[RMDB]
RNA sequence: GGGAACGACUCGAGUAGAGUCGAAAAGGAGCGCGAGGCCGAGGCCCAGGCCGCCAUGGAGGCCAACUCCGAGGGGAGCUUGACGCGGCCCAAGAAGGCCAUCCCGCCGGGCUGCGGGGACGAGGUGGAGGAGGAGGACGAGAGCAUCCUGGACACAGUCAAAAUUUACUUUCGAGUAAAUUUUGACAAAAGAAACAACAACAACAAC
Reactivity to 2A3 in 0.01 (KOAc 150mM, MgCl2 10mM, bicine 150mM(pH8.5), 24C), signal-to-noise 1, nucleotides 027 to 156: g070g020a080g040c040g000c040g040a030g020g070c040c050g050a060g000g080c050c000c020a010g010g010c010c020g040c030c030a090u120g120g000a010g000g020c020c040a030a070c030u010c010c000g000a170g000g030g020g000a020g000c070u040u080g040a050c070g000c000g030g050c000c000c020a080a070g130a080a040g030g000c010c000a040u030c010c000c000g010c000c020g030g050g000c040u040g000c020g000g020g010g010a040c020g030a010g000g020u070g000g020a010g010g010a030g020g010a030g000g030a040c060g030a040g000a000g030c010a020u030c020c070u050g050g000a020c070a010c050a140